[RMDB]
RNA sequence: GGGAACGACUCGAGUAGAGUCGAAAAGCGUACAGAACUUGACGGAGAUUGGCGGUAUGCUGGCACGUGGUAACGUCCGUGCGAUGCUGCAUGGCAUUCCUAUCUUCCGUGACCUCGCCUUCCGUAGGCCACUCGAAUAGUUCGCUAUUCGAGUGGCAAAAGAAACAACAACAACAAC
Reactivity to DMS in 0.01 (KOAc 150mM, MgCl2 10mM, bicine 150mM(pH8.5), 24C), signal-to-noise 2, nucleotides 027 to 126: g000c030g010u050a020c050a150g000a070a040c130u050u000g000a070c070g020g020a020g000a070u010u050g030g020c270g020g040u010a040u010g040c000u000g030g000c030a030c060g030u000g010g010u010a050a090c180g010u000c060c050g000u000g000c040g010a120u000g010c070u020g060c000a050u020g000g010c040a110u000u030c010c000u000a140u030c020u020u010c130c010g030u030g020a140c030c040u030c030g000c020c000u000u000c030c020g040u030a120g000
Reactivity to 2A3 in 0.01 (KOAc 150mM, MgCl2 10mM, bicine 150mM(pH8.5), 24C), signal-to-noise 7, nucleotides 027 to 126: g020c010g010u060a040c060a080g100a160a040c060u120u240g060a020c000g030g000a030g050a120u110u130g050g000c030g000g050u050a050u120g040c050u040g070g010c020a010c020g070u120g010g020u110a180a020c050g070u040c030c010g010u050g010c010g090a120u150g080c080u100g000c020a070u060g060g000c020a050u070u090c000c000u020a040u020c020u160u060c050c000g030u020g060a070c010c020u020c020g010c000c000u030u030c020c010g010u040a060g120
This 177-nucleotide RNA was probed chemically with DMS and 2A3. Conditions: 150 mM KOAc, 10 mM MgCl2 and 150 mM bicine (pH 8.5), 24 C. For DMS the reverse transcriptase was MarathonRT. Source: RMDB library OK1LIB, as collected in RNAgym.